Background
An RNA of 177 nucleotides, treated with DMS and 2A3 and read out base by base.

[RMDB]
RNA sequence: GGGAACGACUCGAGUAGAGUCGAAAAUUCAGAAGAUGGCAGAACUCGUGCUGGAUCGACUUGCCCUGCAGGAACUGCAUGUCGUCGAUCACCAGAAGGUCGAUAUCGCGAAGCUGUUCCUUGAAGACUGGUGAGUCAUCUUCGGAUGACUCACCAGAAAAGAAACAACAACAACAAC
Reactivity to DMS in 0.01 (KOAc 150mM, MgCl2 10mM, bicine 150mM(pH8.5), 24C), signal-to-noise 1, nucleotides 027 to 126: u020u040c030a070g040a150a100g000a060u000g030g010c000a130g000a080a130c040u000c020g020u000g020c010u000g000g040a070u000c020g020a050c040u000u010g020c050c030c020u000g020c110a000g020g000a070a070c040u000g040c000a050u010g020u010c030g000u010c000g000a010u000c020a060c030c090a080g120a080a080g020g010u000c100g040a040u010a090u000c080g000c020g010a140a080g000c040u000g000u020u020c000c000u010u000g000a070a080g040a190
Reactivity to 2A3 in 0.01 (KOAc 150mM, MgCl2 10mM, bicine 150mM(pH8.5), 24C), signal-to-noise 1, nucleotides 027 to 126: u040u070c040a000g040a080a000g030a100u110g040g000c030a010g040a180a050c030u020c050g090u060g010c030u060g000g000a020u020c020g030a020c030u030u110g030c010c000c050u140g020c020a020g040g040a070a040c020u010g000c010a050u240g030u040c020g050u010c020g020a040u050c000a030c070c000a040g300a300a120g150g000u070c090g000a030u080a030u160c040g010c030g020a040a030g000c030u020g000u030u030c020c000u020u030g050a060a020g000a050
Source: RMDB library OK2TST, as collected in RNAgym. The DMS profile rests on 767 reads. The 2A3 profile rests on 982 reads.